[RMDB]
RNA sequence: GGGAACGACUCGAGUAGAGUCGAAAACAUAGCUUAUAAAAGUAAGCAAUAAACUAAGCAUACAGGUCGACACAUCUCUGUUCCGUCAUACGUAUACGGAAGAAAGUCGCGACCGGAAGUUUUACGACUUAUACCAGCUCUUCGGAGCUGGUAUAAGAAAAGAAACAACAACAACAAC
Reactivity to 2A3 in 0.01 (KOAc 150mM, MgCl2 10mM, bicine 150mM(pH8.5), 24C), signal-to-noise 3, nucleotides 027 to 126: c050a020u160a020g000c010u000u020a010u040a110a160a050a050g080u030a020a010g020c010a000a070u100a100a050a040c190u150a060a070g050c010a030u110a160c080a070g020g010u010c030g150a110c010a020c000a180u060c030u000c020u110g180u100u010c040c000g000u000c090a110u110a200c080g090u120a090u020a190c010g040g000a010a000g040a020a100a000g030u080c080g020c000g030a010c000c000g000g000a040a000g000u010u000u020u080a010c040g000a000
Reactivity to DMS in 0.01 (KOAc 150mM, MgCl2 10mM, bicine 150mM(pH8.5), 24C), signal-to-noise 3, nucleotides 027 to 126: c070a050u010a160g000c010u000u000a030u000a080a160a120a120g000u000a000a010g010c030a160a190u020a070a170a130c120u010a050a080g040c180a110u040a120c160a040g000g010u000c000g020a190c080a010c050a230u030c120u000c020u020g020u020u000c000c000g020u010c130a130u060a070c300g010u020a020u030a060c010g000g030a010a030g020a000a010a140g000u000c210g000c010g000a030c000c010g000g010a040a100g000u010u000u000u010a050c250g040a290
Chemical mapping of a 177-nucleotide RNA with 2A3 and DMS. For 2A3 the reverse transcriptase was SuperScript II with manganese. The RNA was probed in 150 mM KOAc, 10 mM MgCl2 and 150 mM bicine (pH 8.5) at 24 C.